The data come from the RNA Mapping Database (RMDB), library TTRINS. This 177-nucleotide RNA was probed chemically with DMS. DMS adducts were read by reverse transcription with MarathonRT. The DMS profile rests on 1,338 reads.
RNA sequence: GGGAACGACUCGAGUAGAGUCGAAAAGAUAUGGAAUACUCCAUAGUGUCUUAAGGCUAGGCUCAGUGUUCGGAAACGAACACGGAGCCUUGGACCCUUAAGACACUAUGGAGGUAUUCCUAAGUCAUCGUAGAAUGAUCUUCGGAUCAUUCUACGAAAAAGAAACAACAACAACAAC
Reactivity to DMS in 0.01 (KOAc 150mM, MgCl2 10mM, bicine 150mM(pH8.5), 24C), signal-to-noise 1, nucleotides 027 to 126: g010a030u020a300u010g010g000a000a010u000a030c000u010c000c000a000u000a000g030u000g000u000c010u010u010a000a030g010g000c010u000a010g020g010c010u000c000a020g010u000g010u020u000c000g010g000a120a090a270c010g000a030a010c000a010c000g000g030a020g030c010c000u000u000g020g000a190c300c000c000u000u000a000a000g000a000c000a000c000u000a000u000g000g010a000g010g000u000a000u000u000c000c000u000a060a080g010u000c040a150